Chemical mapping of a 207-nucleotide RNA with 2A3. For 2A3 the reverse transcriptase was SuperScript II with manganese. Values cover nucleotides 27 to 156. Source: RMDB library M2RFOK, as collected in RNAgym.
RNA sequence: GGGAACGACUCGAGUAGAGUCGAAAAACUGACGGUACGCCGUUAGAACGGUAGAAAAGAUGGUUUGAAAACCACGCCUUCUACCAAUAUAGUAAAUAAAUAGGCGGAGCGGUCAUACGUGACCGCAAAAACAUCCUUGGCUUCGGCCAAGGAUGAAGUGAGACAAUACCUUCGGGUAUUGUCUCACAAAAGAAACAACAACAACAAC
Reactivity to 2A3 in 0.01 (KOAc 150mM, MgCl2 10mM, bicine 150mM(pH8.5), 24C), signal-to-noise 1, nucleotides 027 to 156: a000c010u010g000a000c000g020g010u040a040c150g000c080c000g000u010u000a000g010a090a000c060g000g000u000a010g020a020a000a010a010g140a250u040g000g000u210u100u140g100a110a100a000a000c000c000a000c000g030c000c000u010u000c000u000a010c000c000a030a000u110a020u060a000g070u030a000a030a190u040a070a060a020u080a070g010g020c020g000g000a020g000c000g000g000u000c000a040u010a060c200g040u010g000a000c000c000g000c000a130a000a000a000a000c000a000u000c000c000u000u000g010g000c000u010u030c150g070g000c000c020a000a000g000g000a000u000g000a010a000